[RMDB]
Source: RMDB library OK3TST, as collected in RNAgym. Chemical mapping of a 207-nucleotide RNA with DMS and 2A3. For 2A3, 7,004 sequencing reads were counted. For DMS, 9,977 sequencing reads were counted.
RNA sequence: GGGAACGACUCGAGUAGAGUCGAAAAGGCGUGGACAGGAGGUUGAUGCGCGAGUCCGACAUCGCUGUCUGCUCGACGAGUUUAGCCGUGUCGUCCGUGGAACCGUCAUUGACGACGAUAAUCUCCAAGGCGGCGUAGGUCUGGCGCAUGGCGGAGCCACGGUAAAUGUGUUCGCACAUUUACCGUGAAAAGAAACAACAACAACAAC
Reactivity to DMS in 0.01 (KOAc 150mM, MgCl2 10mM, bicine 150mM(pH8.5), 24C), signal-to-noise 3, nucleotides 027 to 156: g020g020c050g040u010g000g020a090c050a120g020g010a120g040g010u000u010g010a050u000g020c000g030c030g000a060g020u000c030c010g010a040c030a070u000c020g010c020u000g010u010c020u000g030c100u010c010g030a130c040g000a180g010u000u010u000a090g020c060c070g050u010g020u000c000g060u010c010c020g000u000g000g010a080a170c250c110g010u000c010a090u000u000g010a180c040g000a040c020g010a090u000a040a070u000c060u010c030c020a070a110g030g000c010g020g000c010g010u000a100g030g020u000c010u000g010g020c010g000c040a040u000g000g000c040g000g010a110g010c070
Reactivity to 2A3 in 0.01 (KOAc 150mM, MgCl2 10mM, bicine 150mM(pH8.5), 24C), signal-to-noise 6, nucleotides 027 to 156: g030g010c040g020u040g020g000a040c050a090g030g030a040g000g070u100u120g080a060u040g000c020g000c010g050a000g010u000c030c040g030a040c040a100u110c030g000c020u020g020u030c000u020g110c070u080c130g140a150c090g000a030g030u050u040u070a050g050c090c060g070u100g000u080c010g000u000c010c010g000u010g010g030a110a120c070c030g160u230c100a030u020u080g030a020c030g000a000c000g000a010u030a090a040u050c010u000c040c020a030a020g010g000c010g000g000c010g010u020a030g000g010u010c020u020g060g000c010g000c010a010u030g020g020c050g030g020a020g000c020